[RMDB]
RNA sequence: GGGAACGACUCGAGUAGAGUCGAAAAAGCUGCUCAGUAUACGUACUGAGCAGCAAGGGGUUGAAGCGGACACCCCUUCAGGCGCGCGCCCAAGCUCCGUACGCCCCCUCAUACGUGAGGCGGCGAAAUAGGUGUAUCUGGUUCGCCAGAUACACAACAGUCAUACUUAGUUCGCUAAGUAUGACUGAAAAGAAACAACAACAACAAC
Reactivity to 2A3 in 0.01 (KOAc 150mM, MgCl2 10mM, bicine 150mM(pH8.5), 24C), signal-to-noise 5, nucleotides 027 to 156: a000g010c000u000g000c000u010c000a000g010u020a030u020a070c210g020u000a010c010u000g010a000g000c000a000g000c000a000a000g010g010g000g000u030u100g180a190a000g000c000g000g000a000c000a000c000c000c000c000u050u160c070a010g000g000c010g010c040g040c050g010c110c000c010a010a020g030c090u010c000c000g010u020a060c010g000c000c000c000c000c000u010c000a030u040a050c170g060u030g020a000g000g000c010g000g000c000g010a000a010a020u210a050g140g010u000g000u000a000u010c000u000g000g020u040u040c090g050c070c000a000g000a000u000a000c000a000c000a000a020
Reactivity to DMS in 0.01 (KOAc 150mM, MgCl2 10mM, bicine 150mM(pH8.5), 24C), signal-to-noise 2, nucleotides 027 to 156: a080g020c000u000g030c000u000c000a040g010u000a060u010a110c300g030u000a030c010u010g010a020g030c010a020g000c020a000a010g010g010g020g000u000u000g000a160a120g030c000g000g000a090c020a100c020c010c010c050u000u000c090a100g010g020c040g010c080g010c090g000c000c000c020a090a200g000c020u000c000c010g000u000a130c020g060c010c000c070c000c000u000c050a090u000a090c150g010u020g000a050g010g040c110g030g010c020g010a010a030a190u020a120g040g020u000g030u000a000u000c000u000g000g010u010u010c300g020c000c010a030g000a020u000a000c000a020c000a040a100
The record gives the reactivity of an RNA of 207 nucleotides to 2A3 and DMS. The reactions ran in a buffer of 150 mM KOAc, 10 mM MgCl2 and 150 mM bicine (pH 8.5), at 24 C. It was measured as part of the RMDB library M2RFPK.